RNA sequence: GGGAACGACUCGAGUAGAGUCGAAAACUGAUCUUCGGAUCAGCAGAGGGGGUCCUUUGAUCUCCUGAUGAGGCUAUGAAGUACCUGAAGCCUCCACGGGUAUGGAGCCUUAAGGGAGGGAGGACGGAGGCACCCAGGCAAUCUCAUUCGUGAGAAAGGACUCAAACAGAUUCGUCUGUUUGAGUCCAAAAGAAACAACAACAACAAC
Reactivity to 2A3 in 0.01 (KOAc 150mM, MgCl2 10mM, bicine 150mM(pH8.5), 24C), signal-to-noise 2, nucleotides 027 to 156: c000u000g000a000u000c000u060u120c300g060g010a000u000c000a000g010c060a020g060a260g120g040g000g000g000u020c020c020u300u160u000g010a000u000c000u000c000c000u000g000a100u300g200a010g000g000c020u020a250u300g000a000a010g000u000a000c000c000u040g050a170a020g010c000c000u010c000c000a000c000g000g010g000u000a010u010g000g020a000g000c000c000u030u100a050a040g000g010g000a020g000g010g030a010g010g000a000c040g020g000a000g000g000c010a010c020c000c000a020g070g140c040a060a140u040c000u000c000a080u160u150c230g160u120g000a050g020a060a040a070